The record gives the reactivity of an RNA of 207 nucleotides to 2A3 and DMS. The data come from the RNA Mapping Database (RMDB), library M2RFOK. The reactions ran in a buffer of 150 mM KOAc, 10 mM MgCl2 and 150 mM bicine (pH 8.5), at 24 C. The 2A3 profile rests on 2,258 reads.

RNA sequence: GGGAACGACUCGAGUAGAGUCGAAAACAUUCUUGAAAAAGUGAUGUAGAUUUAUAGCCCAUAACUUUUUUGAAUUACAUCGACGAUACGGCGUCGAAAGAAAAAUAACUAGACCGUAUGAAAGAAAAAAACAACAGUAGCUUCGGCUACUGUUGAACCUUAAAAUGUUGUUCGCAACAUUUUAAGGAAAAGAAACAACAACAACAAC
Reactivity to 2A3 in 0.01 (KOAc 150mM, MgCl2 10mM, bicine 150mM(pH8.5), 24C), signal-to-noise 3, nucleotides 027 to 156: c020a010u030u000c010u050u060g000a040a020a020a020a010g030u030g020a030u010g030u060a090g050a230u080u240u090a100u170a060g020c000c010c000a040u120a080a060c050u000u080u020u020u040u110g100a100a080u140u140a100c050a090u050c010g000a000c000g020a020u000a010c000g010g000c000g000u000c010g020a010a070a000g070a010a060a020a000a020u140a050a010c020u020a040g110a050c000c010g010u000a000u020g030a050a070a070g070a030a040a030a020a010a000a020c000a000a000c000a000g000u000a000g000c000u040u040c170g070g000c000u000a000c000u000g000u000u000g000a000a000
Reactivity to DMS in 0.01 (KOAc 150mM, MgCl2 10mM, bicine 150mM(pH8.5), 24C), signal-to-noise 1, nucleotides 027 to 156: c020a180u010u010c020u030u000g000a140a040a010a000a110g010u000g000a010u000g020u000a030g010a090u000u000u010a090u000a300g000c000c000c140a030u010a050a030c010u030u000u000u010u040u000g010a070a090u000u010a110c100a170u000c000g020a090c020g040a100u000a000c000g010g000c010g040u000c000g010a030a070a100g040a000a100a070a060a070u000a070a150c090u050a090g020a100c000c000g040u010a000u010g000a270a060a240g000a020a000a070a080a130a100a150c050a000a020c000a000g070u000a000g010c010u000u010c300g020g030c000u000a000c000u000g010u000u000g030a030a110